[RMDB]
RNA sequence: GGGAACGACUCGAGUAGAGUCGAAAAUUGCCCAGACUUUUGAGAGUAGUGAUGACCUCUCAGCCCCUCCACCUUGGGGUGCCCUAUCCGAGCACUGCUGUUUCGGUAGAAAGGCUAAGCACGUCGCGCUCCAUAAGUUGUUCGCAACUUAUGGAGCAAAAGAAACAACAACAACAAC
Reactivity to 2A3 in 0.01 (KOAc 150mM, MgCl2 10mM, bicine 150mM(pH8.5), 24C), signal-to-noise 1, nucleotides 027 to 126: u100u170g080c000c020c000a060g150a190c040u120u070u010u030g000a000g000a010g020u120a030g050u040g170a130u060g080a110c000c020u000c000u000c000a000g000c000c010c010c000u020c060c040a100c070c000u060u010g020g000g000g000u010g010c000c020c000u000a010u000c000c000g000a000g050c040a060c210u300g110c020u020g000u130u300u090c000g000g000u000a000g010a010a020a000g040g000c000u010a030a000g000c070a030c110g110u050c040g000c000
Reactivity to DMS in 0.01 (KOAc 150mM, MgCl2 10mM, bicine 150mM(pH8.5), 24C), signal-to-noise 2, nucleotides 027 to 126: u000u000g000c010c000c000a140g000a160c140u020u000u000u000g010a050g020a020g000u000a090g010u000g000a140u000g000a190c300c000u000c000u000c010a000g000c000c010c000c000u000c150c110a080c270c130u000u000g000g000g000g000u000g010c000c000c010u000a190u000c000c000g000a010g000c040a050c230u010g000c130u000g030u010u000u000c020g010g000u000a040g010a050a090a110g000g000c050u000a020a060g030c090a080c180g020u020c090g020c230

Source information: Chemical mapping of a 177-nucleotide RNA with 2A3 and DMS. It was measured as part of the RMDB library VIROID. For DMS the reverse transcriptase was MarathonRT. For 2A3 the reverse transcriptase was SuperScript II with manganese. DMS (dimethyl sulfate) methylates the pairing face of unpaired adenines and cytosines.